This 170-nucleotide RNA was probed chemically with 2A3 and DMS.
The DMS profile rests on 52,927 reads.
For DMS the reverse transcriptase was MarathonRT.
Conditions: 150 mM KOAc, 10 mM MgCl2 and 150 mM bicine (pH 8.5), 24 C.
It was measured as part of the RMDB library 15KLIB.
RNA sequence: GGGAACGACUCGAGUAGAGUCGAAAAACUAUGACGUAGCAGUCACUGCCGGCCCAUUCAUGGAUAAUGCUAUUAAUGUUGGUGGUACAGGAUUACAGUAUGCCGCCAUUACUGCACCUUAUGUAGUUAACAGCAAUGUUCGCAUUGCUGAAAAGAAACAACAACAACAAC
Reactivity to 2A3 in 0.01 (KOAc 150mM, MgCl2 10mM, bicine 150mM(pH8.5), 24C), signal-to-noise 9, nucleotides 027 to 129: a000c110u130a090u130g070a020c070g020u020a010g010c030a010g030u020c020a020c080u040g010c020c010g030g010c000c020c020a050u130u140c070a080u080g030g020a050u050a220a050u140g040c050u050a030u160u080a110a050u090g100u160u140g020g010u020g010g000u050a060c030a050g070g050a080u130u110a060c010a030g060u080a070u130g020c000c010g010c010c000a030u050u090a020c010u010g000c010a060c010c020u130u120a120u160g030u010a050g030u070u070a110a040
Reactivity to DMS in 0.01 (KOAc 150mM, MgCl2 10mM, bicine 150mM(pH8.5), 24C), signal-to-noise 9, nucleotides 027 to 129: a080c040u010a080u050g030a060c100g040u000a110g000c040a100g030u020c070a080c100u000g000c000c000g050g000c050c000c040a000u000u040c100a090u000g000g020a070u020a060a050u040g030c060u000a060u050u030a060a100u030g040u000u000g020g020u010g010g010u020a050c090a040g040g030a070u040u060a090c110a060g010u000a040u000g000c020c030g000c100c040a030u000u010a040c020u000g010c080a020c140c060u050u050a100u010g000u010a070g020u000u010a060a150